[RMDB]
RNA sequence: GGGAACGACUCGAGUAGAGUCGAAAAGAUAUGGAUAUAGUAGGGAGCAGAGUAUCGGAAACGAUACCUGCUUUGAUCUACGUAUCCUAAGUCAAAAUCGCUUGAUAACUUCGGUUAUCAAGCGAAAGCUAAGAGAGUACUUCGGUACUCUCUUAGCAAAAGAAACAACAACAACAAC
Reactivity to DMS in 0.01 (KOAc 150mM, MgCl2 10mM, bicine 150mM(pH8.5), 24C), signal-to-noise 3, nucleotides 027 to 126: g010a020u000a240u020g000g010a010u000a000u000a080g010u000a000g000g020g030a030g030c010a010g000a210g020u000a000u000c000g030g000a060a040a070c010g010a000u000a000c000c000u000g010c010u000u010u020g020a140u010c000u010a000c000g000u000a000u000c000c000u000a010a110g000u000c020a100a070a130a190u000c000g020c010u000u000g000a020u010a000a020c000u000u010c270g030g010u000u000a000u000c000a010a000g010c000g000a000a020a040
Reactivity to 2A3 in 0.01 (KOAc 150mM, MgCl2 10mM, bicine 150mM(pH8.5), 24C), signal-to-noise 2, nucleotides 027 to 126: g020a000u060a020u080g000g010a000u020a020u050a220g040u020a020g000g070g220a060g000c020a010g110a050g050u000a000u000c010g000g030a080a010a010c010g000a000u020a000c000c010u010g000c030u040u060u080g000a010u000c000u000a000c000g000u000a000u000c000c000u000a060a010g060u050c030a020a010a030a300u030c010g020c010u040u000g000a000u000a000a010c010u060u070c280g100g010u010u000a000u000c000a000a000g000c000g000a010a010a000